[RMDB]
RNA sequence: GGGAACGACUCGAGUAGAGUCGAAAAAUGUUGGUGAUAGUGCGGAAGUUGCAGUUAAAAUGUUUAAAAAAAACUUUUAACGUACCAAUGGAAAAACUCAUAACACUAGUUGCAACUGCAGAAGCUGAAGGUGCUAUCUUCGGAUAGCACAAAAGAAACAACAACAACAAC
Reactivity to 2A3 in 0.01 (KOAc 150mM, MgCl2 10mM, bicine 150mM(pH8.5), 24C), signal-to-noise 3, nucleotides 027 to 129: a020u070g000u060u000g000g020u080g020a070u070a090g050u030g120c060g030g000a060a000g010u110u000g000c000a020g020u020u030a000a000a000a050u190g020u060u050u180a090a080a030a000a000a000a000a050c100u050u040u000u000a020a010c000g000u020a080c010c020a070a070u170g040g000a020a010a000a040a040c000u000c070a110u090a160a000c010a010c070u030a030g070u110u110g000c010a060a030c060u010g000c040a000g020a110a020g000c060u070g000a060a000g100
Reactivity to DMS in 0.01 (KOAc 150mM, MgCl2 10mM, bicine 150mM(pH8.5), 24C), signal-to-noise 4, nucleotides 027 to 129: a000u030g030u070u010g030g020u070g020a070u020a070g060u020g010c040g040g050a180a020g000u020u040g010c000a130g000u010u010a020a030a020a050u100g050u000u010u060a010a000a000a080a020a020a000a010c060u000u000u000u000a000a000c030g020u040a090c270c060a090a040u120g000g000a090a070a070a090a040c090u030c080a120u080a120a100c100a050c110u000a000g030u000u000g000c010a070a080c050u000g010c120a070g000a150a060g000c130u000g030a200a080g000